[RMDB]
Chemical mapping of a 207-nucleotide RNA with 2A3. It was measured as part of the RMDB library M2RFPK. The RNA was probed in 150 mM KOAc, 10 mM MgCl2 and 150 mM bicine (pH 8.5) at 24 C. Reactivities are given for positions 27 through 156.
RNA sequence: GGGAACGACUCGAGUAGAGUCGAAAAGGAGGACGAAGCAUAUUUCUGUUUCUGGAGGAUUAUUUAUAAUCUGCCGGAAAGUCUUGCAUGUGGCUGGGAUAUGUUCAGUCUGGUAGAAUUAAGCACGAAAACGUGUCCUUGUUCGCAAGGACACGAACCUCUAGCAACGGUUCGCCGUUGCUAGAGGAAAAGAAACAACAACAACAAC
Reactivity to 2A3 in 0.01 (KOAc 150mM, MgCl2 10mM, bicine 150mM(pH8.5), 24C), signal-to-noise 1, nucleotides 027 to 156: g040g040a000g000g000a000c010g020a030a000g000c020a010u020a070u050u090u070c090u090g170u030u060u000c000u000g000g000a020g000g010a030u000u000a040u050u110u010a130u010a010a000u020c000u030g110c000c000g010g010a000a000a000g000u010c020u080u150g110c070a170u130g030u090g090g000c010u030g020g000g010a020u030a010u040g080u080u030c060a000g040u020c000u020g000g040u110a030g110a100a060u200u140a080a030g090c030a030c150g070a000a150a120a040c000g010u000g000u000c000c000u000u000g010u060u030c070g000c120a000a000g010g100a010c020a000c000g000a000a000